[RMDB]
RNA sequence: GGGAACGACUCGAGUAGAGUCGAAAACACCUCGGUGAUCAGUGCAGAGAUACGUCACAAUGCCCCUGUAGGCAGAGCCUAGACAAGAGUUACAUAACCCAGGUGAUCCGUACAGAGUGAUGUCACACCGAAUGAUAUCAUUCGUGAUAUCAUUCGGAAAAGAAACAACAACAACAAC
Reactivity to 2A3 in 0.01 (KOAc 150mM, MgCl2 10mM, bicine 150mM(pH8.5), 24C), signal-to-noise 5, nucleotides 027 to 126: c020a040c010c020u030c030g050g020u070g030a070u100c060a060g040u040g070c030a010g040a010g030a200u060a150c050g030u030c040a020c010a090a120u120g020c000c000c000c030u060g030u090a040g040g000c020a020g030a020g060c010c040u040a030g020a040c060a090a030g020a010g100u110u070a050c030a100u150a070a050c010c010c020a010g020g000u030g020a040u020c040c040g020u020a030c020a040g110a000g080u060g040a060u120g060u120c020a010c000a020
Reactivity to DMS in 0.01 (KOAc 150mM, MgCl2 10mM, bicine 150mM(pH8.5), 24C), signal-to-noise 7, nucleotides 027 to 126: c090a130c050c000u000c180g020g020u000g000a070u000c090a060g030u010g010c060a050g000a100g010a110u000a050c110g010u000c040a070c080a080a120u010g000c030c010c030c080u000g020u000a040g000g020c050a060g000a160g010c040c030u000a090g000a090c110a060a100g000a070g000u000u010a080c140a070u000a070a070c040c010c020a060g010g010u010g000a060u000c030c030g000u000a060c110a050g010a120g020u000g010a070u000g000u000c070a070c170a200